[RMDB]
RNA sequence: GGGAACGACUCGAGUAGAGUCGAAAACGUCUUGAGCUGCAAGCCUGUUAUGUGUAUCGUUAGGUGCUUUGGUUAGGUGUUUUUUAACUUCAGAAGUUUAACGUCAUUUCAAAGGCCUCCUUCUCAUAAUGGAGUAUUUCCUCCAUAUGCACAUCCAUGAUGCCCUAAAUUUCGAUUUAGGGCAUCAAAAAGAAACAACAACAACAAC
Reactivity to DMS in 0.01 (KOAc 150mM, MgCl2 10mM, bicine 150mM(pH8.5), 24C), signal-to-noise 2, nucleotides 027 to 156: c060g030u010c020u000u010g020a300g020c020u000g000c020a080a160g030c020c000u010g030u000u020a070u010g020u000g000u010a020u000c040g020u000u000a050g040g030u000g010c030u000u010u000g010g020u000u000a100g030g020u010g020u000u000u000u000u000u000a060a080c070u000u000c140a120g010a080a110g000u000u000u000a060a100c060g010u000c020a170u000u000u000c070a070a020a150g020g010c020c030u010c030c010u000u000c000u000c010a080u010a060a060u000g000g000a040g010u000a120u000u000u000c110c000u000c020c010a050u000a040u000g000c050a070c040a080u010c050c040a260
Reactivity to 2A3 in 0.01 (KOAc 150mM, MgCl2 10mM, bicine 150mM(pH8.5), 24C), signal-to-noise 3, nucleotides 027 to 156: c040g020u010c040u030u110g040a090g030c060u070g000c050a040a020g010c000c020u080g010u070u060a060u050g060u000g000u010a010u140c070g040u030u110a060g000g000u100g090c060u010u020u030g020g030u040u050a030g000g000u000g050u040u000u000u000u060u050a020a020c000u010u020c040a040g040a180a010g110u000u020u080a030a000c020g010u000c040a120u060u080u060c050a080a040a010g040g010c010c010u060c000c020u060u100c000u010c050a010u040a110a060u030g000g010a010g000u040a160u050u060u090c000c000u000c000c000a010u040a010u060g000c050a010c000a060u050c030c030a030

Structure probing data (DMS and 2A3) for a 207-nucleotide construct. The reactions ran in a buffer of 150 mM KOAc, 10 mM MgCl2 and 150 mM bicine (pH 8.5), at 24 C. For 2A3 the reverse transcriptase was SuperScript II with manganese. The DMS profile rests on 5,275 reads.